The record gives the reactivity of an RNA of 177 nucleotides to 2A3 and DMS. Source: RMDB library OK1LIB, as collected in RNAgym. The reactions ran in a buffer of 150 mM KOAc, 10 mM MgCl2 and 150 mM bicine (pH 8.5), at 24 C. For DMS, 1,624 sequencing reads were counted.

RNA sequence: GGGAACGACUCGAGUAGAGUCGAAAAGUGAGUCCUUACGAGGACUCACAAUAAAUUCAGCGGUAAUUCGACCGCAAAUAUUACCGCUGAUGCGGUCGACAAAGCUGCUACGUACGCGUAGCAGCAAGUACGUAGUGAGCUUCGGCUCACUACGUACAAAAGAAACAACAACAACAAC
Reactivity to 2A3 in 0.01 (KOAc 150mM, MgCl2 10mM, bicine 150mM(pH8.5), 24C), signal-to-noise 3, nucleotides 027 to 126: g000u000g020a010g000u000c000c010u040u040a060c300g110a030g000g000a000c000u000c000a010c000a010a000u010a000a020a010u040u060c020a010g000c000g010g010u020a010a000u070u120c110g060a160c060c100g040c060a010a000a000u100a000u000u020a020c000c000g020c010u000g010a000u020g000c030g040g040u100c030g000a050c060a020a210a010g010c000u000g000c000u000a000c000g040u040a010c190g010c000g120u000a000g000c000a000g000c000a000a000
Reactivity to DMS in 0.01 (KOAc 150mM, MgCl2 10mM, bicine 150mM(pH8.5), 24C), signal-to-noise 1, nucleotides 027 to 126: g000u050g020a000g030u000c000c000u000u050a080c100g000a030g000g000a030c010u000c000a000c010a060a000u010a010a030a190u000u050c070a060g000c030g030g050u000a000a000u010u000c140g000a120c100c100g020c140a070a050a040u070a030u050u000a040c010c030g030c050u000g050a050u050g000c000g000g040u000c020g000a170c230a030a080a160g010c000u000g030c000u010a000c010g080u000a080c300g000c000g060u000a000g010c020a050g020c000a020a010